[RMDB]
RNA sequence: GGGAACGACUCGAGUAGAGUCGAAAACGCCGCUGCACUGGCCCCACGAGGGCGAGGUCGAUACGAUCGCCGGCUUGUCCUGGUCGACGGACGCGAACGUCCAUAUACAGCUGGUCGAGAAGCUCGCUGUGAUCUACGGCGACCCGGUCUCGAUCGCGGCGAGUAUGAUAUUCGUAUCAUACUCGCCAAAAGAAACAACAACAACAAC
Reactivity to 2A3 in 0.01 (KOAc 150mM, MgCl2 10mM, bicine 150mM(pH8.5), 24C), signal-to-noise 2, nucleotides 027 to 156: c040g100c070c010g010c060u180g040c070a070c210u120g110g010c020c000c000c000a090c160g090a300g000g000g060c060g020a060g000g020u040c020g030a030u010a210c050g030a070u030c030g040c030c030g030g000c000u090u110g050u060c000c010u070g070g000u100c110g080a150c070g020g030a000c000g010c030g090a140a040c040g030u010c000c030a040u140a000u050a130c010a020g030c010u080g010g000u040c020g020a000g000a080a030g020c040u020c060g000c010u010g020u020g040a150u100c060u100a020c030g020g000c000g020a030c000c050c020g110g090u020c010u000c000g000a020u010c020g010c020
Annotation:
Structure probing data (2A3) for a 207-nucleotide construct. 2A3 adducts were read by reverse transcription with SuperScript II with manganese. The RNA was probed in 150 mM KOAc, 10 mM MgCl2 and 150 mM bicine (pH 8.5) at 24 C.